The record gives the reactivity of an RNA of 177 nucleotides to DMS.
RNA sequence: GGGAACGACUCGAGUAGAGUCGAAAAGAUAUGGAACUGUAGGGAGCUGCAGAUCGGAAACGAUCUGGACAGCAUCGAUCUAUUUCCUAAGUCAAAACAACCACCAGGGUUCGCCCUGGUGGUUGAACGGAAUACCCUAGUUCGCUAGGGUAUUCCGAAAAGAAACAACAACAACAAC
Reactivity to DMS in 0.01 (KOAc 150mM, MgCl2 10mM, bicine 150mM(pH8.5), 24C), signal-to-noise 1, nucleotides 027 to 126: g010a000u010a070u000g000g010a020a100c300u000g010u010a010g010g010g010a010g020c000u000g010c000a000g000a000u000c000g020g010a040a020a030c000g040a020u000c010u010g010g000a160c040a000g030c000a300u010c110g000a050u020c000u000a030u000u000u000c000c000u000a030a150g010u010c030a060a110a090a260c000a020a000c000c000a010c000c000a000g000g000g010u000u010c220g030c000c010c000u010g040g030u010g000g010u010u000g020a000a150
High DMS reactivity at an A or C suggests that its Watson-Crick edge is free.